[RMDB]
This 177-nucleotide RNA was probed chemically with DMS. DMS adducts were read by reverse transcription with MarathonRT. The RNA was probed in 150 mM KOAc, 10 mM MgCl2 and 150 mM bicine (pH 8.5) at 24 C. The DMS profile rests on 2,047 reads. It was measured as part of the RMDB library OK2TRN.
RNA sequence: GGGAACGACUCGAGUAGAGUCGAAAACACUUCGUGUCUCAAGGAGUUGUCUUUGGUGCGCCUCGGAGUCCUUGAGUGCCACCCCACUUCGGCGCUGUAACGUUGACCUUCUGAUAAUGAUCCAAUCAGCACUGUAUCUGUUCGCAGAUACAGUGCUAAAAGAAACAACAACAACAAC
Reactivity to DMS in 0.01 (KOAc 150mM, MgCl2 10mM, bicine 150mM(pH8.5), 24C), signal-to-noise 2, nucleotides 027 to 126: c080a070c060u000u010c110g020u000g020u000c030u000c030a040a050g000g000a110g010u000u020g000u000c030u020u000u000g030g060u000g010c100g030c010c010u000c070g020g010a060g020u000c000c000u000u010g000a030g010u010g000c030c060a140c040c010c040c020a070c110u000u000c130g010g030c030g040c030u010g000u000a080a070c080g000u000u000g000a150c290c020u020u000c010u000g000a070u010a060a100u000g010a080u000c060c070a080a110u020c120